Structure probing data (2A3) for a 207-nucleotide construct. The data come from the RNA Mapping Database (RMDB), library OK3TST.
[RMDB]
RNA sequence: GGGAACGACUCGAGUAGAGUCGAAAAUGGUCUUAGAAUACUGAGAGAAUUAGAGACUAUCUGCUCCAUUCUUUCAUUGUGGUGGUGGUCUGAGCUUUAACAUUUGCUAAGUUACUAUUAUGAGAACAUUCUUUUAGUUACCAAGAAUACAGGGAUAGUACUCAUCCCCAUUCGUGGGGAUGAGUACAAAAGAAACAACAACAACAAC
Reactivity to 2A3 in 0.01 (KOAc 150mM, MgCl2 10mM, bicine 150mM(pH8.5), 24C), signal-to-noise 2, nucleotides 027 to 156: u090g010g000u020c020u090u080a050g100a070a120u120a140c090u090g010a010g000a000g000a010a030u010u040a200g020a000g000a150c040u060a120u140c070u160g090c050u050c020c000a020u040u080c020u070u030u050c050a100u040u060g040u010g000g050u010g010g010u010g060g000u000c060u040g030a000g110c000u030u100u110a110a070c050a080u010u020u270g050c040u140a080a010g010u060u020a060c020u030a070u270u000a040u160g050a050g050a110a000c010a100u080u090c040u000u170u000u020a020g020u030u010a060c030c050a060a010g010a110a030u080a060c120a040g220g000g010a040u140a090